RNA sequence: GGGAACGACUCGAGUAGAGUCGAAAAGUACAGUGGUGCAACCAUAGCUCAUUGCAACCUUGAACAGUUGUGCUGAAGUGAUCUUCCCUCCUCAGCCUCCCAAGUAGCUGGAAGGACAGGGGCGUGCCACACGACUCCCGUUCGCGGGAGUCGUGUGAAAAGAAACAACAACAACAAC
Reactivity to DMS in 0.01 (KOAc 150mM, MgCl2 10mM, bicine 150mM(pH8.5), 24C), signal-to-noise 1, nucleotides 027 to 126: g060u030a060c140a090g010u010g010g030u020g010c080a030a160c080c080a150u030a160g030c050u000c080a080u000u000g000c080a030a120c020c020u000u000g010a060a100c240a120g000u030u000g020u010g010c100u010g010a070a020g030u000g020a070u000c120u000u000c020c030c020u000c010c010u000c080a060g000c010c000u000c010c010c010a020a120g000u000a030g020c100u030g000g010a040a040g000g000a040c100a050g000g000g000g000c140g030u010g000c100